The record gives the reactivity of an RNA of 177 nucleotides to 2A3 and DMS. The data come from the RNA Mapping Database (RMDB), libraries RFM100 and RFMREP. Reactivities are given for positions 27 through 126.
RNA sequence: GGGAACGACUCGAGUAGAGUCGAAAAUUGCACAAACUUAUAUUGCACUGCAGUAUGGGUCGGGGCGGGAAUGCGAGCCGGGUUCGGACAUGUACCGCCGUGCCCUUUCGCAUGCCAAUGCGAAGGGAACGGCAGUCCUAUUCGUAGGACUGCCGUUAAAAGAAACAACAACAACAAC
Reactivity to 2A3 in 0.01 (KOAc 150mM, MgCl2 10mM, bicine 150mM(pH8.5), 24C), signal-to-noise 9, nucleotides 027 to 126: u090u080g010c030a030c020a050a080a000c040u060u030a030u030a030u070u040g020c140a140c300u250g000c010a010g010u030a020u020g030g050g060u050c160g130g030g010g020c050g010g000g030a070a040u090g040c100g070a050g060c020c020g050g030g050u160u240c030g020g010a020c020a040u080g060u130a040c010c000g000c000c010g000u010g000c000c000c000u020u070u010c000g000c000a000u050g120c020c040a090a010u010g000c000g000a000a000g000g000g010
Reactivity to DMS in 0.01 (KOAc 150mM, MgCl2 10mM, bicine 150mM(pH8.5), 24C), signal-to-noise 9, nucleotides 027 to 126: u010u010g010c020a040c060a080a080a040c050u010u010a030u000a030u000u000g000c020a170c210u030g010c000a010g010u000a020u000g010g000g000u010c090g010g010g000g010c030g010g000g000a160a050u010g010c120g010a170g010c020c020g010g010g020u020u020c020g010g010a140c050a040u000g000u020a170c030c010g010c020c010g010u000g000c020c000c000u000u000u000c000g010c000a010u000g000c120c150a100a040u000g000c000g000a010a010g000g000g000

DMS adducts were read by reverse transcription with MarathonRT.
Values are in units of 0.01, from 0 to 300, in steps of 10.
For 2A3 the reverse transcriptase was SuperScript II with manganese.